[RMDB]
RNA sequence: GGGAACGACUCGAGUAGAGUCGAAAAGUCGGCAGAUCCAGCCUUAUCUGGAGGAGGGCAAAUGCUUUCGCAUGGUGCUUAAACCGUGGCGUGAGAAACGCAGUCUUUCCCAGAAUGCACUCAGCCAUACUGUAAAACAAUUCGUUGUUUUACAGUAAAAAGAAACAACAACAACAAC
Reactivity to DMS in 0.01 (KOAc 150mM, MgCl2 10mM, bicine 150mM(pH8.5), 24C), signal-to-noise 9, nucleotides 027 to 126: g010u010c100g020g020c040a090g000a100u000c030c040a090g000c120c110u000u010a070u010c040u000g010g010a090g010g010a080g010g010g010c030a070a100a120u000g000c020u000u000u000c070g010c010a030u000g000g010u000g010c110u000u010a080a090a100c140c110g010u000g000g010c010g010u000g000a050g000a060a060a140c160g010c030a070g000u000c020u000u000u000c010c010c010a180g000a050a070u000g010c040a090c040u000c040a080g010c020c040a180
Reactivity to 2A3 in 0.01 (KOAc 150mM, MgCl2 10mM, bicine 150mM(pH8.5), 24C), signal-to-noise 9, nucleotides 027 to 126: g060u050c040g020g010c030a020g010a100u040c020c020a010g060c020c040u130u130a170u080c030u040g060g020a110g030g030a030g010g060g000c030a060a080a070u120g010c010u050u060u090c030g010c020a030u070g060g080u060g110c060u170u210a160a060a030c020c020g030u030g060g030c040g030u060g020a050g040a050a100a010c070g000c020a010g010u010c010u010u030u010c000c000c000a000g030a020a010u060g000c020a020c040u040c020a020g000c020c000a030